[RMDB]
RNA sequence: GGGAACGACUCGAGUAGAGUCGAAAAGAUAUGGAUCCCGUAUCCUUCAUCGAUCAGCGUCGGAAACGACGCUGGGAGAAGGUACCGGGAUCCUAAGUCAAAACCAGUACGCUUCGGCGUACUGGAAGUACGAAAGCUGGUUCGCCAGCUUUCGUACAAAAGAAACAACAACAACAAC
Reactivity to DMS in 0.01 (KOAc 150mM, MgCl2 10mM, bicine 150mM(pH8.5), 24C), signal-to-noise 1, nucleotides 027 to 126: g000a050u000a300u000g000g010a010u000c000c000c000g030u010a300u010c000c010u040u000c010a300u000c110g000a070u010c000a000g010c000g070u020c000g000g000a180a180a300c000g010a000c000g030c000u000g010g000g020a040g000a010a010g000g020u000a190c300c000g010g000g010a010u000c000c050u000a000a060g020u000c000a130a050a140a180c000c000a000g000u000a000c010g000c000u000u000c180g050g020c000g010u010a000c000u000g020g010a000a060
Reactivity to 2A3 in 0.01 (KOAc 150mM, MgCl2 10mM, bicine 150mM(pH8.5), 24C), signal-to-noise 1, nucleotides 027 to 126: g020a020u080a120u160g020g000a040u050c050c000c000g000u010a070u300c020c020u130u070c060a300u300c100g130a100u100c000a020g040c000g000u000c020g090g010a090a070a140c000g020a020c000g020c020u010g000g000g000a050g000a000a020g000g000u000a030c150c000g020g070g000a000u010c000c020u020a000a000g000u000c000a010a000a080a200c010c000a000g000u000a010c000g020c000u070u090c300g190g010c000g020u010a000c000u000g000g020a010a000
The record gives the reactivity of an RNA of 177 nucleotides to DMS and 2A3. The 2A3 profile rests on 1,632 reads. The DMS profile rests on 688 reads. Reactivities are given for positions 27 through 126. The reactions ran in a buffer of 150 mM KOAc, 10 mM MgCl2 and 150 mM bicine (pH 8.5), at 24 C.